[RMDB]
RNA sequence: GGGAACGACUCGAGUAGAGUCGAAAAGAGUUCAUUAUGUCUGAUGGGUUUGCAGCCUACACCCUGACGCCUCGGCCUAUAAUCCAUGCUGUUGCCCCCGACUAUCGGGUUGAACAUAACCCUAAGCCGAAUCAGGUUGGUUCGCCAACCUGAUUCGAAAAGAAACAACAACAACAAC
Reactivity to DMS in 0.01 (KOAc 150mM, MgCl2 10mM, bicine 150mM(pH8.5), 24C), signal-to-noise 1, nucleotides 027 to 126: g000a030g040u010u000c050a050u010u000a070u030g000u010c040u010g000a140u020g020g010g000u000u000u000g050c090a150g000c030c020u010a070c150a020c060c030c000u000g000a130c110g020c070c010u000c050g010g010c050c000u030a100u000a040a030u000c080c040a060u010g050c020u010g020u020u000g020c020c050c020c010c030g020a060c070u000a100u010c200g000g000g000u000u000g010a080a090c070a150u010a050a010c020c010c010u010a120a130g000c090